[RMDB]
RNA sequence: GGGAACGACUCGAGUAGAGUCGAAAAACACGAAGCUAGACAAAGAUUGGAAUCCUACGUUGCCUCCAUCGAACAAACUGUCACUGACCCAGUCUUGUCUUCUAAAUUGAAGAGAGGUUCCAAGUCCACGUAGGCUACGCUUCGGCGUAGCCUACGUAAAAGAAACAACAACAACAAC
Reactivity to 2A3 in 0.01 (KOAc 150mM, MgCl2 10mM, bicine 150mM(pH8.5), 24C), signal-to-noise 1, nucleotides 027 to 126: a020c000a020c000g000a020a000g060c160u020a050g050a000c000a050a250a000g060a120u060u000g020g000a020a140u060c000c000u080a070c130g150u060u130g000c000c000u170c000c000a050u000c000g040a040a000c070a040a050a050c050u210g040u120c000a040c030u190g000a080c000c000c000a020g000u000c000u010u080g090u000c000u060u000c000u100a250a290a200u220u220g080a040a000g010a000g000a000g090g000u060u000c010c000a110a000g190u090c020c000
An RNA of 177 nucleotides, treated with 2A3 and read out base by base. Values cover nucleotides 27 to 126. The reactions ran in a buffer of 150 mM KOAc, 10 mM MgCl2 and 150 mM bicine (pH 8.5), at 24 C. For 2A3, 417 sequencing reads were counted. The data come from the RNA Mapping Database (RMDB), library OK1LIB.